RNA sequence: GGGAACGACUCGAGUAGAGUCGAAAAGGAAUCGACAGUAGAGUGUAUCAUGUCAGUAAGCAUGCCGGGGAAUGGUGGUUUACCCCGUUAUCAAAUGAUUACCGACCAAUAAUUGGCGGAACUCGUUAGGCCCGUCCACACUUCGGUGUGGACGGAAGAUUUGCGUAUAGUUCGCUAUACGCAAAUCAAAAGAAACAACAACAACAAC
Reactivity to DMS in 0.01 (KOAc 150mM, MgCl2 10mM, bicine 150mM(pH8.5), 24C), signal-to-noise 2, nucleotides 027 to 156: g020g030a060a070u000c020g020a090c020a050g020u010a150g010a110g020u000g000u000a040u000c040a180u010g020u000c010a050g020u010a100a080g010c000a030u000g040c160c060g000g090g000g000a080a100u000g010g020u010g010g020u000u000u000a240c010c000c010c020g040u000u010a050u010c140a110a030a040u000g010a090u020u000a070c010c000g010a150c020c050a040a110u000a060a190u000u000g030g010c020g000g000a060a080c040u000c020g010u000u000a090g020g000c100c000c000g000u000c000c000a000c020a030c010u000u000c260g040g000u020g040u000g000g000a000c000g030g010a010a020
Reactivity to 2A3 in 0.01 (KOAc 150mM, MgCl2 10mM, bicine 150mM(pH8.5), 24C), signal-to-noise 6, nucleotides 027 to 156: g060g020a040a060u070c050g050a040c050a040g070u120a030g040a010g050u100g010u050a100u160c060a050u060g040u030c050a030g050u090a080a010g040c040a040u060g050c060c020g010g000g000g020a020a060u080g040g030u020g020g030u030u040u120a070c010c000c000c010g020u030u030a090u110c040a030a040a060u060g020a030u040u050a080c010c000g120a190c030c030a040a020u270a170a100u120u040g000g000c020g010g010a010a020c040u010c050g040u030u040a040g040g030c000c000c000g000u000c000c000a000c000a000c010u040u050c240g030g000u000g000u000g000g010a000c000g010g000a000a000